[RMDB]
RNA sequence: GGGAACGACUCGAGUAGAGUCGAAAAUUGGCAAUCAACUCAACGUCCUCUUUACGGACUCUCUGCCUAUCUGGGCCGUACUGAAUGAGUUGCAGCGGUGCACCACUACAGUAUGGACGUACCACAAAGUCGACCCCAUCUUCGGAUGGGGUCGACUAAAAGAAACAACAACAACAAC
Reactivity to 2A3 in 0.01 (KOAc 150mM, MgCl2 10mM, bicine 150mM(pH8.5), 24C), signal-to-noise 2, nucleotides 027 to 126: u120u120g130g020c010a030a020u010c030a110a090c030u080c080a000a140c000g080u020c000c010u100c040u120u200u140a100c140g030g000a090c010u000c000u000c040u000g030c100c030u010a100u040c000u050g060g130g000c000c000g000u000a000c070u080g030a030a210u110g000a060g180u120u000g000c030a010g090c060g180g020u010g000c010a010c000c030a040c080u160a120c000a010g070u030a010u070g080g000a040c000g020u020a050c000c020a040c120a110a080
Notes
An RNA of 177 nucleotides, treated with 2A3 and read out base by base. For 2A3, 609 sequencing reads were counted. 2A3 adducts were read by reverse transcription with SuperScript II with manganese.